The record gives the reactivity of an RNA of 207 nucleotides to 2A3 and DMS.
Reactivities are given for positions 27 through 156.
The reactions ran in a buffer of 150 mM KOAc, 10 mM MgCl2 and 150 mM bicine (pH 8.5), at 24 C.
The data come from the RNA Mapping Database (RMDB), library OK3TST.
For DMS, 3,242 sequencing reads were counted.
Values are in units of 0.01, from 0 to 300, in steps of 10.
DMS adducts were read by reverse transcription with MarathonRT.
[RMDB]
RNA sequence: GGGAACGACUCGAGUAGAGUCGAAAAAGCGUAACAUCUUUGUGCGCUCGGACUUUCCUCCGAGAAACCUCCAGGCCCAAAAGAAGUUUACACCUUCCACACCUUCAGGCGGUGCAAGUCGCUUAGGUUCAACAAAGCCGUUACCAUGCCAGAUGCAGUUUGUUACGUUUUUCGAAACGUAACAAACAAAAGAAACAACAACAACAAC
Reactivity to 2A3 in 0.01 (KOAc 150mM, MgCl2 10mM, bicine 150mM(pH8.5), 24C), signal-to-noise 4, nucleotides 027 to 156: a000g040c030g000u060a070a070c020a070u090c070u070u190u130g000u030g000c030g010c030u010c020g040g010a020c030u100u100u010c030c040u030c040c040g060a080g030a110a070a030c020c000u000c020c010a040g040g000c030c020c000a010a110a030a030g030a050a020g010u050u070u110a070c060a040c030c020u010u030c030c020a060c010a020c050c010u090u120c060a040g000g040c020g020g010u020g040c050a060a040g060u070c010g000c030u050u060a050g010g000u050u100c010a040a050c020a050a140a030g000c010c010g020u030u030a050c030c010a040u110g020c030c040a060g040a090u180g060c040a030
Reactivity to DMS in 0.01 (KOAc 150mM, MgCl2 10mM, bicine 150mM(pH8.5), 24C), signal-to-noise 1, nucleotides 027 to 156: a040g000c050g040u000a080a070c020a070u010c090u010u010u010g000u000g010c080g050c010u010c020g000g010a130c070u000u010u000c060c020u000c040c060g010a140g000a020a050a060c060c030u000c020c020a090g010g010c000c020c040a020a030a070a000g010a040a060g020u000u000u000a100c060a080c190c010u000u000c020c030a070c040a080c020c000u000u000c070a120g040g040c270g040g020u000g010c080a050a170g020u000c020g010c040u010u000a060g010g010u000u000c040a060a080c020a050a020a100g010c040c000g010u000u000a030c030c020a110u000g010c020c040a120g030a000u000g000c030a150